[RMDB]
RNA sequence: GGGAACGACUCGAGUAGAGUCGAAAAUCAAAGAUCGGUGAUUGGCGGCUCGAAGCCUUUUACCCUGCAGCCAAUGUGAGCGGAUUCUAGCAGGGUUUUAUAGAUCGUCAACACUAUAAAACAUUGAGUCCUAUAUAAAUUUCGAUUUAUAUAGGACAAAAGAAACAACAACAACAAC
Reactivity to 2A3 in 0.01 (KOAc 150mM, MgCl2 10mM, bicine 150mM(pH8.5), 24C), signal-to-noise 3, nucleotides 027 to 126: u080c010a060a040a020g150a150u140c090g040g000u020g020a240u000u000g010g000c020g000g050c060u030c060g080a070a030g040c000c040u070u080u000u060a030c000c000c000u000g010c020a020g000c020c030a150a130u200g110u130g110a180g030c050g080g000a100u240u150c030u090a040g000c000a010g000g000g020u000u000u000u000a040u010a020g040a030u050c010g010u010c000a010a010c020a010c020u020a030u140a110a170a080a030c050a030u050u130g010a020
Reactivity to DMS in 0.01 (KOAc 150mM, MgCl2 10mM, bicine 150mM(pH8.5), 24C), signal-to-noise 4, nucleotides 027 to 126: u050c070a090a110a100g000a090u020c130g000g010u000g020a160u000u010g000g030c000g020g010c100u000c100g010a080a110g010c130c060u000u000u010u000a020c000c010c000u010g020c020a050g000c070c050a090a090u030g020u010g010a180g080c140g000g000a140u050u040c160u010a110g000c000a020g000g020g000u000u010u010u000a020u000a080g010a040u030c030g010u010c030a010a030c030a020c000u000a070u030a070a050a070a120c110a080u040u020g000a300
Notes
Source: RMDB libraries RFM100 and RFMREP, as collected in RNAgym. Structure probing data (2A3 and DMS) for a 177-nucleotide construct. The 2A3 profile rests on 1,802 reads.